[RMDB]
The record gives the reactivity of an RNA of 177 nucleotides to DMS and 2A3. DMS adducts were read by reverse transcription with MarathonRT. It was measured as part of the RMDB library OK2TST.
RNA sequence: GGGAACGACUCGAGUAGAGUCGAAAAUACACCGCGUUCGUGGUCGACGCCUACGCCGGUGUGAUCGCGGGCUGGGAAUGCUCGCUGACCAAAGACGCAGCGUUCGUCGAACGCGCAUUACGCCACGUCACUUCCAUUGGUUCGCCAAUGGAAGUGAAAAAGAAACAACAACAACAAC
Reactivity to DMS in 0.01 (KOAc 150mM, MgCl2 10mM, bicine 150mM(pH8.5), 24C), signal-to-noise 4, nucleotides 027 to 126: u010a090c090a100c100c010g010c050g000u000u000c130g000u000g030g010u020c060g000a060c060g000c040c040u000a070c040g030c030c060g020g030u010g010u020g000a040u000c040g020c000g000g010g010c010u000g020g030g020a250a210u000g000c020u000c010g000c010u000g040a090c040c040a050a120a130g000a090c050g020c090a120g000c000g010u000u000c030g020u000c070g000a020a010c010g020c010g020c190a060u000u000a070c060g010c010c010a140c160g000
Reactivity to 2A3 in 0.01 (KOAc 150mM, MgCl2 10mM, bicine 150mM(pH8.5), 24C), signal-to-noise 3, nucleotides 027 to 126: u180a000c050a030c010c020g010c020g030u030u040c020g000u040g070g100u070c060g060a070c010g030c010c040u030a020c000g070c070c060g050g020u040g000u030g030a070u070c030g010c010g000g030g000c000u040g010g030g220a090a060u190g000c000u000c000g000c080u080g000a030c030c000a050a020a040g100a020c050g000c060a060g010c030g030u050u030c030g090u070c090g040a020a010c010g000c010g000c010a010u080u150a050c050g020c040c040a080c040g020